[RMDB]
RNA sequence: GGGAACGACUCGAGUAGAGUCGAAAAGCGCGUGAACCGAUCUGGUAGUAGCCAAGCGAUGGGGUGACGCAGGAAGGUAGCUGAGCCAGUCAGUGGUAAUACUGGUGUAAGCGUGUAGGGCGUGACCGCUAAUAUAGCACUUCGGUGCUAUAUUAGCAAAAGAAACAACAACAACAAC
Reactivity to DMS in 0.01 (KOAc 150mM, MgCl2 10mM, bicine 150mM(pH8.5), 24C), signal-to-noise 5, nucleotides 027 to 126: g010c060g010c020g020u000g000a100a120c040c020g010a060u010c070u000g010g010u000a080g000u000a120g020c030c030a060a070g020c100g000a080u000g010g020g030g010u000g010a080c060g010c050a060g010g010a080a130g020g010u010a130g020c020u000g000a300g010c010c010a030g010u010c210a090g020u010g000g020u000a100a100u000a040c010u000g000g010u000g000u010a130a070g010c020g010u000g000u000a090g000g000g010c040g020u000g000a060c090c060
Reactivity to 2A3 in 0.01 (KOAc 150mM, MgCl2 10mM, bicine 150mM(pH8.5), 24C), signal-to-noise 4, nucleotides 027 to 126: g000c010g010c060g130u050g040a040a060c010c020g020a110u070c100u070g070g000u040a090g040u040a030g030c000c020a060a020g100c040g110a090u100g000g000g020g100u020g020a000c040g000c030a000g050g030a030a040g010g040u070a030g000c010u020g000a010g040c010c000a010g020u040c030a050g050u080g180g010u130a120a050u050a170c020u020g000g000u010g030u120a020a030g020c040g030u090g030u090a080g010g030g010c020g020u030g030a020c020c010
Structure probing data (DMS and 2A3) for a 177-nucleotide construct.
The RNA was probed in 150 mM KOAc, 10 mM MgCl2 and 150 mM bicine (pH 8.5) at 24 C.
Values cover nucleotides 27 to 126.
For DMS, 6,014 sequencing reads were counted.
For 2A3, 4,911 sequencing reads were counted.
For 2A3 the reverse transcriptase was SuperScript II with manganese.